Notes:
Structure probing data (2A3 and DMS) for a 207-nucleotide construct. Conditions: 150 mM KOAc, 10 mM MgCl2 and 150 mM bicine (pH 8.5), 24 C. 2A3 adducts were read by reverse transcription with SuperScript II with manganese.
[RMDB]
RNA sequence: GGGAACGACUCGAGUAGAGUCGAAAAGAGGCGAACAGGAACAUGGUACUUUCCGACCGGCAGCGGGCCCGAGCGACUCCGGAUUUCCCAACCACUACGCCCUGGGCCGUCGCACCUCGGUGUCGGCAGAAUCGUUGAACCCUACCAGCUCCGAUUAUGAAAAUAUCCUGUUCGCAGGAUAUUUUCAAAAAGAAACAACAACAACAAC
Reactivity to 2A3 in 0.01 (KOAc 150mM, MgCl2 10mM, bicine 150mM(pH8.5), 24C), signal-to-noise 2, nucleotides 027 to 156: g070a050g030g000c040g020a060a040c050a060g050g010a060a010c030a150u090g030g010u110a060c070u030u110u030c020c060g100a110c010c020g060g010c010a010g040c020g000g000g030c020c050c070g020a030g000c000g050a060c030u020c070c070g030g030a060u030u050u030c000c000c000a000a030c040c030a070c100u230a080c050g020c020c000c040u090g010g000g010c050c040g040u080c010g000c020a060c010c020u040c090g040g080u100g000u020c000g000g010c010a000g040a060a040u060c030g050u110u110g060a090a080c000c000c040u000a020c020c030a010g010c020u040c020c020g120a070u190u200a080
Reactivity to DMS in 0.01 (KOAc 150mM, MgCl2 10mM, bicine 150mM(pH8.5), 24C), signal-to-noise 2, nucleotides 027 to 156: g010a180g040g020c020g010a110a070c070a120g010g000a070a110c060a060u020g020g000u010a060c070u020u000u010c010c020g000a060c040c030g000g010c060a070g010c020g030g010g030c020c010c020g010a060g020c020g020a100c050u000c060c000g000g000a130u000u000u000c000c010c000a170a110c030c030a120c030u010a110c020g020c010c010c020u020g070g000g050c010c010g020u010c000g010c020a130c040c010u000c060g010g000u000g000u000c000g010g040c140a050g000a010a050u010c030g020u000u010g020a080a120c040c030c010u000a070c030c010a100g010c000u020c020c000g020a060u000u000a120